Chemical mapping of a 177-nucleotide RNA with 2A3 and DMS. DMS adducts were read by reverse transcription with MarathonRT. The data come from the RNA Mapping Database (RMDB), library RFMREP.
RNA sequence: GGGAACGACUCGAGUAGAGUCGAAAAGUAAGCGCAGGCACACCACAGUGCCUGCUAUCACGGCAUUAUCGCCAGCGGUGCUGCCGUGAUGCGGUCUUCGCAAGGACCGCAACAUGAAGGUACGAUGCGACCAUAAAAUGUUCGCAUUUUAUGGUCGAAAAGAAACAACAACAACAAC
Reactivity to 2A3 in 0.01 (KOAc 150mM, MgCl2 10mM, bicine 150mM(pH8.5), 24C), signal-to-noise 3, nucleotides 027 to 126: g110u110a070a000g060c000g000c070a000g000g010c000a000c000a010c050c040a050c030a050g020u000g000c000c000u000g000c000u000a000u010c010a000c020g000g020c010a010u000u050a020u060c010g030c080c060a050g160c070g010g000u030g010c010u000g000c000c000g000u000g000a010u010g000c000g010g010u000c000u150u130c160g050c150a060a080g010g010a000c010c020g020c000a010a000c020a030u180g100a100a040g080g010u100a030c050g020a070u150g060
Reactivity to DMS in 0.01 (KOAc 150mM, MgCl2 10mM, bicine 150mM(pH8.5), 24C), signal-to-noise 3, nucleotides 027 to 126: g000u000a100a100g020c150g020c020a000g000g020c010a020c000a070c070c100a160c110a100g010u000g000c000c010u000g000c010u010a020u000c010a020c010g000g020c010a010u010u000a020u000c030g010c130c170a140g020c010g010g000u020g000c130u000g000c040c000g030u010g000a000u000g010c000g000g000u000c010u000u010c270g010c260a140a110g010g000a020c010c000g030c000a060a030c170a080u000g010a140a140g010g000u000a060c080g010a090u020g000